[RMDB]
RNA sequence: GGGAACGACUCGAGUAGAGUCGAAAACCCGUCGUGUUCGCACGACGGGAACUACGGAGAAUGGAGCUCGGUAUAAAACUCCAACCCUUGGAAACAAGGGAACAAUCGCCACUUUCGAGUGGCGAAACGUAAACACAUGUUUCGACAUGUGUUUACGAAAAGAAACAACAACAACAAC
Reactivity to DMS in 0.01 (KOAc 150mM, MgCl2 10mM, bicine 150mM(pH8.5), 24C), signal-to-noise 3, nucleotides 027 to 126: c010c000c010g030u000c000g040u000g000u000u010c220g050c010a010c010g010a000c000g000g000g000a010a030c080u000a100c100g010g020a030g000a120a140u000g000g010a020g060c040u020c050g020g000u000a100u000a020a010a050a090c020u010c000c000a060a300c000c000c010u000u000g000g000a120a130a180c000a010a000g000g000g000a080a030c210a080a160u000c000g010c000c000a020c000u000u000u010c160g000a030g030u010g000g010c000g000a000a010a060
Reactivity to 2A3 in 0.01 (KOAc 150mM, MgCl2 10mM, bicine 150mM(pH8.5), 24C), signal-to-noise 4, nucleotides 027 to 126: c010c000c000g000u000c000g000u010g030u020u090c250g040c090a000c010g020a000c000g000g010g000a020a010c030u100a040c040g130g030a010g030a200a230u060g010g010a010g010c020u010c020g040g070u170a130u060a140a080a020a030c010u000c000c000a060a180c010c000c000u000u010g000g000a010a040a030c000a010a000g000g000g020a010a010c010a010a070u040c000g020c000c000a010c010u050u080u140c250g110a010g010u000g000g000c010g000a000a000a000
Source: RMDB library M2PK50, as collected in RNAgym. This 177-nucleotide RNA was probed chemically with DMS and 2A3. 2A3 adducts were read by reverse transcription with SuperScript II with manganese. Conditions: 150 mM KOAc, 10 mM MgCl2 and 150 mM bicine (pH 8.5), 24 C. For DMS the reverse transcriptase was MarathonRT.